[RMDB]
RNA sequence: GGGAACGACUCGAGUAGAGUCGAAAACAACAAAACAAAACGGGCCACGGAAAGAAAACCGAAAGGGACGCAAAGAUCAUGCAAGUACGAAAGCGUCGCCGGGACCGAAUCGUACUAAACAAACAAACAUGGUAUCCGUGUUCGCACGGAUACCAUGAAAAGAAACAACAACAACAAC
Reactivity to DMS in 0.01 (KOAc 150mM, MgCl2 10mM, bicine 150mM(pH8.5), 24C), signal-to-noise 1, nucleotides 027 to 126: c070a000a100c220a100a040a060a090c270a060a050a180a190c050g060g000g000c020c000a050c020g000g000a020a070a250g060a070a070a010a180c000c000g000a140a090a110g000g000g000a000c000g000c000a030a000a130g040a160u060c060a230u000g000c260a160a100g000u050a010c010g060a050a220a080g100c070g000u010c030g000c010c000g000g000g030a050c010c000g000a020a090u000c060g000u000a030c020u030a000a040a110c080a020a010a060c160a040a050a060
Reactivity to 2A3 in 0.01 (KOAc 150mM, MgCl2 10mM, bicine 150mM(pH8.5), 24C), signal-to-noise 2, nucleotides 027 to 126: c050a020a030c000a000a080a000a000c020a050a110a020a000c020g000g000g100c040c020a120c020g040g050a000a140a080g170a050a210a130a130c040c030g000a120a000a020g000g000g020a000c000g010c050a000a180a000g120a010u130c040a000u110g210c150a020a060g040u000a060c010g010a070a060a000g000c000g000u000c040g040c180c040g010g000g030a000c000c000g000a020a100u050c000g000u140a000c000u010a000a140a010c140a000a040a010c010a000a000a000
Overview
This 177-nucleotide RNA was probed chemically with DMS and 2A3. For 2A3 the reverse transcriptase was SuperScript II with manganese. DMS adducts were read by reverse transcription with MarathonRT. It was measured as part of the RMDB library OK1LIB.